[RMDB]
RNA sequence: GGGAACGACUCGAGUAGAGUCGAAAAGAUAUGGAUGUACUUUUGACGACGGUGUGUCGGAAACGACACUAACGUCGAUAAGUGACAUCCUAAGUCAAAGCUUAAGUUACUUCGGUAACUUAAGCAACUUUAUACCAAGCUUCGGCUUGGUAUAAAGAAAAGAAACAACAACAACAAC
Reactivity to 2A3 in 0.01 (KOAc 150mM, MgCl2 10mM, bicine 150mM(pH8.5), 24C), signal-to-noise 4, nucleotides 027 to 126: g030a040u080a060u150g000g000a010u000g000u060a050c020u080u100u120u150g300a170c080g000a000c010g030g050u050g000u000g010u080c010g000g010a040a040a020c020g000a000c000a000c060u050a220a020c010g000u000c020g010a010u010a000a010g020u030g130a010c000a000u020c000c000u010a100a000g030u010c060a170a080a030g000c000u000u000a000a000g000u010u010a000c010u010u120c300g050g000u000a000a000c000u000u010a010a000g000c000a000a000
Reactivity to DMS in 0.01 (KOAc 150mM, MgCl2 10mM, bicine 150mM(pH8.5), 24C), signal-to-noise 4, nucleotides 027 to 126: g000a060u000a300u000g010g010a020u000g020u010a020c000u000u000u000u000g010a170c110g010a040c040g010g000u000g000u000g010u000c000g000g000a080a080a170c000g020a000c000a010c000u000a060a110c020g020u010c000g000a070u000a000a000g010u000g000a010c000a000u000c000c000u000a050a110g010u000c040a100a110a190g000c000u000u000a000a000g010u000u000a000c000u000u010c200g030g020u000a010a000c000u010u000a000a010g000c010a020a030